[RMDB]
RNA sequence: GGGAACGACUCGAGUAGAGUCGAAAACAAUGCAGGUUAAGCCAAAGGGAUGUCCCGACCGGAGGCCAACAAUCCAGGGAACCGGAUGUCAUCACGUUGUUGCAGUACCAGAUGGCAUCUUAAAUCCAAAAGAACACAUAGUUCGCUAUGUGUUCAAGUAUCAUAUGAACUUCGGUUCAUAUGAUACAAAAGAAACAACAACAACAAC
Reactivity to 2A3 in 0.01 (KOAc 150mM, MgCl2 10mM, bicine 150mM(pH8.5), 24C), signal-to-noise 3, nucleotides 027 to 156: c090a050a130u220g060c060a060g120g070u200u220a130a030g010c000c010a000a000a030g050g010g000a030u070g040u020c000c000c000g020a020c020c010g020g000a010g000g020c000c000a050a020c020a000a030u080c070c030a020g000g020g030a010a050c030c030g000g000a000u000g010u020c000a000u000c010a010c140g030u030u030g000u020u030g040c090a070g070u130a120c060c050a000g020a010u010g000g010c000a010u000c000u000u030a010a040a010u050c020c000a010a120a000a030g000a000a000c000a000c000a010u010a000g040u050u060c140g040c120u000a000u010g000u000g000u010u000c000a010a000
Reactivity to DMS in 0.01 (KOAc 150mM, MgCl2 10mM, bicine 150mM(pH8.5), 24C), signal-to-noise 2, nucleotides 027 to 156: c030a100a120u010g000c030a070g030g020u000u010a100a090g020c000c000a010a300a240g000g010g020a100u000g000u000c030c000c030g020a300c010c020g020g000a300g010g030c010c050a090a090c090a060a100u000c030c030a120g010g020g040a100a060c100c070g030g000a040u000g010u020c010a040u010c020a260c190g030u000u000g000u000u000g000c010a110g020u030a000c040c080a090g000a060u010g010g000c010a000u010c020u010u000a000a090a090u000c040c030a010a080a050a090g050a010a000c000a010c000a010u000a000g000u000u000c300g040c000u000a000u000g010u010g020u000u000c020a040a030

Chemical mapping of a 207-nucleotide RNA with 2A3 and DMS. DMS adducts were read by reverse transcription with MarathonRT. The RNA was probed in 150 mM KOAc, 10 mM MgCl2 and 150 mM bicine (pH 8.5) at 24 C.